Record summary: This 177-nucleotide RNA was probed chemically with DMS and 2A3. Source: RMDB library OK2TST, as collected in RNAgym. The DMS profile rests on 2,367 reads. The 2A3 profile rests on 2,145 reads.
RNA sequence: GGGAACGACUCGAGUAGAGUCGAAAAGCGCGUCGACGAGGUGCCGGGGAUUCCGCUGUCGCGCUAUGUGGAGGACCUCGACCUGCCCGAACUGGUGCGCGCCAACAAGGCGCGGAUCAACGGGCUAUAUGCCUACUACGUUCGCGUAGUAGGCAUAAAAAGAAACAACAACAACAAC
Reactivity to DMS in 0.01 (KOAc 150mM, MgCl2 10mM, bicine 150mM(pH8.5), 24C), signal-to-noise 3, nucleotides 027 to 126: g010c040g040c030g020u000c060g020a090c090g020a070g010g010u000g020c050c040g010g000g000g010a230u020u000c030c000g040c040u000g010u000c020g020c030g000c020u000a030u000g010u000g020g020a070g020g030a120c020c000u000c010g020a220c090c090u010g010c000c000c000g020a120a090c120u000g020g000u000g000c000g000c010g010c000c000a080a150c290a100a150g000g000c020g010c020g000g000a000u000c010a040a130c020g000g000g010c010u020a030
Reactivity to 2A3 in 0.01 (KOAc 150mM, MgCl2 10mM, bicine 150mM(pH8.5), 24C), signal-to-noise 3, nucleotides 027 to 126: g020c000g010c000g030u020c020g030a190c040g020a050g010g000u040g160c050c010g010g000g050g040a130u250u110c010c030g040c100u130g060u110c020g000c000g020c020u020a050u190g140u100g080g050a070g020g080a060c000c010u010c030g030a040c000c030u030g000c020c000c000g040a150a060c090u020g000g000u130g090c000g000c000g000c010c000a220a270c130a160a160g000g020c000g010c020g000g020a010u000c000a050a240c010g000g000g000c010u000a000